The data come from the RNA Mapping Database (RMDB), library RFM100.
An RNA of 177 nucleotides, treated with 2A3 and read out base by base.
2A3 adducts were read by reverse transcription with SuperScript II with manganese.
The 2A3 profile rests on 1,481 reads.
Conditions: 150 mM KOAc, 10 mM MgCl2 and 150 mM bicine (pH 8.5), 24 C.
RNA sequence: GGGAACGACUCGAGUAGAGUCGAAAAACGUCGCUCAGGUACGCCUGAGCGACGACUGGAGGCUUGGGGCGAUACCACCACUCGUUUGUCUGUUGGCGAUUAGUGUUGUCCCCCCGAGUGGCCAGAACGUUCCAGAGUCAUUCGUGACUCUGGAACGAAAAGAAACAACAACAACAAC
Reactivity to 2A3 in 0.01 (KOAc 150mM, MgCl2 10mM, bicine 150mM(pH8.5), 24C), signal-to-noise 2, nucleotides 027 to 126: a000c040g000u020c000g000c000u000c000a000g020g010u040a020c190g090c020c010u020g000a000g050c040g000a000c000g000a010c000u010g000g020a030g070g040c000u000u010g000g000g000g040c000g000a000u010a000c000c010a000c010c020a020c050u000c000g020u020u040u100g290u110c220u110g150u120u150g010g000c000g010a000u010u030a010g000u010g000u000u010g030u000c070c020c000c010c000c010g020a000g000u010g060g100c000c010a010g010a020a020